[RMDB]
RNA sequence: GGGAACGACUCGAGUAGAGUCGAAAAGAAGUUACGGACAAUGCAGAAAUGACUAAAAAUAUUAAAAAUGACUUGAAAUCACGCUUACCAGAGUAUAUGAUUCCUAGAAAGUUUGAAUGGAUGGAACUCAUGCUAGUGGAUUCGUCCACUAGCAUGAAAAAGAAACAACAACAACAAC
Reactivity to DMS in 0.01 (KOAc 150mM, MgCl2 10mM, bicine 150mM(pH8.5), 24C), signal-to-noise 3, nucleotides 027 to 126: g020a070a100g000u000u000a090c080g000g030a120c110a100a110u040g010c060a100g000a070a130a110u000g000a100c100u020a060a070a050a070a030u040a070u000u030a010a040a090a070a110u020g010a090c030u000u020g010a110a040a030u010c050a030c070g000c000u000u010a090c060c120a110g000a060g000u010a060u020a080u000g000a080u000u000c000c000u030a050g010a080a130a050g030u000u010u010g000a050a030u020g000g010a060u000g000g000a060a070c110
Reactivity to 2A3 in 0.01 (KOAc 150mM, MgCl2 10mM, bicine 150mM(pH8.5), 24C), signal-to-noise 2, nucleotides 027 to 126: g140a010a010g090u140u110a050c030g020g020a040c080a090a100u110g010c030a040g000a150a090a060u110g070a090c030u120a000a000a000a200a000u280a120u300u220a030a000a150a170a070u100g040a040c070u060u100g030a000a000a000u160c030a000c000g000c010u010u010a070c000c100a010g030a010g100u070a040u030a030u150g100a070u000u040c000c000u100a180g060a050a150a080g050u090u160u200g100a130a050u070g000g110a000u110g010g000a030a030c010

Chemical mapping of a 177-nucleotide RNA with DMS and 2A3. The 2A3 profile rests on 724 reads. 2A3 is a SHAPE reagent: it acylates the 2'-hydroxyl of flexible nucleotides of all four kinds.